[RMDB]
RNA sequence: GGGAACGACUCGAGUAGAGUCGAAAAACGGAUAGAUUCGUCUAUCCGUGCAUCUCAUAACAGACAGAGAAAGUCUGCUAAGAUCUCACUUAGAUAAAGAGAAGAGAGUCGAGUUCGCUCGACUCAAUGGUUACGUAAAUUUCGAUUUACGUAACCAAAAAGAAACAACAACAACAAC
Reactivity to DMS in 0.01 (KOAc 150mM, MgCl2 10mM, bicine 150mM(pH8.5), 24C), signal-to-noise 7, nucleotides 027 to 126: a010c000g010g000a010u000a010g000a030u000u010c180g010u000c010u000a000u000c000c000g010u000g000c150a160u000c010u000c020a070u020a110a100c020a000g010a020c010a050g010a220g010a120a160a060g000u000c000u010g010c090u000a020a020g000a060u000c020u010c060a090c040u000u000a040g000a130u010a030a060a080g010a050g010a080a130g000a170g000a020g010u000c000g010a020g010u000u010c230g000c000u000c000g000a010c000u000c000a010a030
Reactivity to 2A3 in 0.01 (KOAc 150mM, MgCl2 10mM, bicine 150mM(pH8.5), 24C), signal-to-noise 5, nucleotides 027 to 126: a000c000g000g000a000u000a010g020a010u010u030c180g040u010c100u000a010u020c000c000g000u000g000c020a080u000c000u000c020a030u090a120a050c000a000g020a000c000a000g220a010g140a300a150a020g030u000c000u010g000c000u010a020a020g000a070u010c030u010c050a060c040u040u040a040g030a120u180a190a110a020g070a000g020a110a050g120a010g000a010g050u000c010g000a000g020u030u050c170g040c090u010c000g010a000c000u000c000a000a020
An RNA of 177 nucleotides, treated with DMS and 2A3 and read out base by base. For DMS the reverse transcriptase was MarathonRT. It was measured as part of the RMDB library M2PK50. Values cover nucleotides 27 to 126.